[RMDB]
RNA sequence: GGGAACGACUCGAGUAGAGUCGAAAAUCUAGACUGAGGUCGCGAUAGUAGUGGCAACGGGUAGACAGGACUACGGGACACAGGACCUAGAGAACCAUAACGUGGGGUGACAGUACAUGUGGUGGAAUCCCUGGUGGACCUUCGGGUCUACCAGGGAAAAAGAAACAACAACAACAAC
Reactivity to DMS in 0.01 (KOAc 150mM, MgCl2 10mM, bicine 150mM(pH8.5), 24C), signal-to-noise 3, nucleotides 027 to 126: u020c020u000a020g010a070c010u000g020a150g010g010u010c000g000c020g010a110u000a050g020u030a050g020u000g000g000c010a100a050c080g000g000g010u010a020g040a150c060a070g000g010a020c020u000a040c040g020g000g000a030c020a050c020a000g020g000a060c120c010u000a010g050a050g000a090a190c010c020a070u040a070a070c090g010u010g020g000g020g010u030g000a040c090a040g010u010a030c140a020u030g020u000g000g000u000g000g000a140a160
Reactivity to 2A3 in 0.01 (KOAc 150mM, MgCl2 10mM, bicine 150mM(pH8.5), 24C), signal-to-noise 2, nucleotides 027 to 126: u030c040u040a050g040a060c020u080g030a090g190g000u040c020g000c030g290a150u050a070g030u040a010g030u010g080g030c070a140a050c070g010g070g090u120a080g040a150c000a040g130g090a000c010u010a000c010g020g000g040a010c000a000c020a000g020g080a070c010c000u020a000g000a000g020a060a030c000c010a020u080a070a030c050g010u030g000g040g000g010u030g040a040c070a020g030u100a060c030a080u090g000u060g000g060u040g010g040a070a100